[RMDB]
RNA sequence: GGGAACGACUCGAGUAGAGUCGAAAACCAUAGCGAUAGGGGGAGAUGCUAGGAGUAGGAGGCGACCGAAGCGAGGGGGAAAGUAAAGAAAGCAACGGGGCUAGCGAGUGGAUGUUCCACCCCCCAGUACCCUACCCGUUCGCGGGUAGGAAAAGAAACAACAACAACAAC
Reactivity to 2A3 in 0.01 (KOAc 150mM, MgCl2 10mM, bicine 150mM(pH8.5), 24C), signal-to-noise 4, nucleotides 027 to 129: c000c000a040u070a020g100c050g070a080u060a100g000g000g000g020g010a060g000a010u070g040c090u100a030g030g020a010g030u090a050g000g040a010g020g000c040g010a030c000c020g010a030a020g040c050g010a040g000g000g000g000g000a000a020a020g060u080a030a040a000g010a040a040a000g050c010a010a060c060g010g040g040g010c020u030a020g030c000g020a000g010u050g010g040a070u120g060u070u000c000c030a030c000c000c000c000c000c000a000g050u100a080c000
Reactivity to DMS in 0.01 (KOAc 150mM, MgCl2 10mM, bicine 150mM(pH8.5), 24C), signal-to-noise 5, nucleotides 027 to 129: c030c040a110u010a060g030c050g000a080u070a060g040g020g020g060g040a040g020a070u040g050c070u020a050g020g030a000g000u050a070g020g020a050g020g030c150g000a050c040c000g000a010a010g010c150g020a040g040g050g020g000g030a030a040a020g010u020a010a020a040g030a060a060a050g050c030a120a070c090g010g010g020g020c030u040a070g030c000g000a050g020u030g030g040a000u000g000u050u010c000c020a090c000c000c000c000c000c010a140g030u040a120c220
This 170-nucleotide RNA was probed chemically with 2A3 and DMS. For DMS the reverse transcriptase was MarathonRT. For 2A3, 8,512 sequencing reads were counted. The DMS profile rests on 15,087 reads.